[RMDB]
RNA sequence: GGGAACGACUCGAGUAGAGUCGAAAAUAUGGCCCGCGAAGGAUGCCCAGAAGGUACCCGUAGGUAACAAGUGACACUAUGGAUCUGAUCUGGGGCUGGAUACCUCUAUCUUGGUGAUCCAGUUAAAGAUAGGAAGCUAGUUCGCUAGCUUCCUAUCAAAAGAAACAACAACAACAAC
Reactivity to DMS in 0.01 (KOAc 150mM, MgCl2 10mM, bicine 150mM(pH8.5), 24C), signal-to-noise 2, nucleotides 027 to 126: u000a120u000g010g010c030c020c000g010c210g000a130a090g010g020a080u000g020c010c000c000a050g050a050a300g000g010u000a010c090c000c000g000u000a000g020g000u020a020a040c000a140a070g000u010g000a250c300a020c000u000a010u000g000g020a030u000c000u000g000a070u000c000u000g000g010g000g010c000u000g000g000a030u000a040c000c010u000c290u000a130u020c170u020u000g000g030u000g000a020u010c000c010a000g000u000u000a000a090a160
Reactivity to 2A3 in 0.01 (KOAc 150mM, MgCl2 10mM, bicine 150mM(pH8.5), 24C), signal-to-noise 2, nucleotides 027 to 126: u230a090u030g050g080c000c020c020g010c070g050a120a050g200g040a070u180g060c020c000c030a020g020a020a000g000g040u050a080c010c000c030g000u000a000g000g030u030a030a020c020a140a300g010u000g050a000c010a000c020u030a000u040g000g000a010u000c000u040g030a160u050c000u010g030g010g000g000c000u000g000g000a010u020a010c030c000u040c020u170a230u220c100u080u140g050g000u070g100a030u000c000c000a000g000u040u040a000a020a000